[RMDB]
RNA sequence: GGGAACGACUCGAGUAGAGUCGAAAAGCGUCUUUCGAGACGCAAAAAAGAUAUGGAUGUCCGCCCGGUAUGGAGCUCUGUGGAUCGGAAACGAUCCACUGAGCUAUGAAGUACCGUAACAAGACAUCCUAAGUCAAAAAAGUGGCUUCGGCCACAAUAUUUGUCUUAUGUUCGCAUAAGACAAAUAAAAAGAAACAACAACAACAAC
Reactivity to DMS in 0.01 (KOAc 150mM, MgCl2 10mM, bicine 150mM(pH8.5), 24C), signal-to-noise 2, nucleotides 027 to 156: g000c010g000u000c000u000u010u000c290g020a030g020a040c000g000c000a010a010a060a140a050a070g000a080u000a180u010g000g010a000u000g000u000c000c030g000c300c240c030g020g010u000a010u010g000g000a030g020c000u000c010u000g010u010g000g000a020u000c000g040g000a070a040a180c010g000a010u010c010c000a000c010u010g000a020g040c010u000a020u000g010a120a260g010u000a000c030c010g030u000a090a100c100a110a040g000a040c020a040u000c010c000u000a000a060g000u010c000a000a120a100a150a120a090g000u000g000g000c010u010u000c200g080g010c000c010a010c000a040a110
Reactivity to 2A3 in 0.01 (KOAc 150mM, MgCl2 10mM, bicine 150mM(pH8.5), 24C), signal-to-noise 3, nucleotides 027 to 156: g000c000g000u010c020u010u150u170c260g100a020g000a010c000g000c000a080a000a030a030a000a110g010a010u020a010u020g000g000a000u000g010u010c030c030g100c170c180c050g010g010u000a010u030g000g020a010g000c000u000c010u020g020u000g010g000a000u000c000g010g020a010a010a010c000g000a000u010c000c000a000c000u000g000a000g000c000u010a150u010g000a000a000g010u000a000c010c000g000u040a060a030c130a200a050g000a000c000a000u000c000c000u000a000a000g000u000c060a050a060a050a140a050a070g040u070g000g000c010u080u110c290g130g010c010c030a000c010a000a000